[RMDB]
RNA sequence: GGGAACGACUCGAGUAGAGUCGAAAAGAUAUGGACCGAGUUUGUAGCCUCUGUUCGGAAACGAACAGUAGGCGUAGAGAAACCGGUCCUAAGUCAAAAGUGCAUGUUGGGUUCGCCCAACAUGCACGUUGAAGGCACAGUUCGCUGUGCCUUCAACAAAAGAAACAACAACAACAAC
Reactivity to 2A3 in 0.01 (KOAc 150mM, MgCl2 10mM, bicine 150mM(pH8.5), 24C), signal-to-noise 1, nucleotides 027 to 126: g000a000u010a000u050g000g010a000c010c030g000a090g140u000u020u020g070u050a020g000c000c000u000c000u010g000u000u000c030g000g000a010a000a000c000g000a000a000c010a010g040u050a020g000g000c000g000u060a000g000a000g000a000a000a000c010c000g000g000u000c000c000u000a000a000g020u000c000a050a030a100a180g010u020g000c010a000u000g010u000u000g060g010g000u040u160c300g130c040c000c000a000a000c000a000u000g010c010a000c000
Reactivity to DMS in 0.01 (KOAc 150mM, MgCl2 10mM, bicine 150mM(pH8.5), 24C), signal-to-noise 2, nucleotides 027 to 126: g000a000u000a000u010g000g000a010c000c010g010a200g020u000u000u000g010u000a010g020c010c000u000c000u000g010u000u000c000g020g000a000a000a010c000g000a020a010c000a010g010u010a010g030g020c010g040u000a080g000a020g000a010a020a010c000c010g000g000u000c000c000u000a000a050g000u000c000a130a100a100a250g000u000g000c010a000u010g000u000u000g000g000g030u010u010c300g010c000c010c000a010a000c010a010u010g010c000a010c010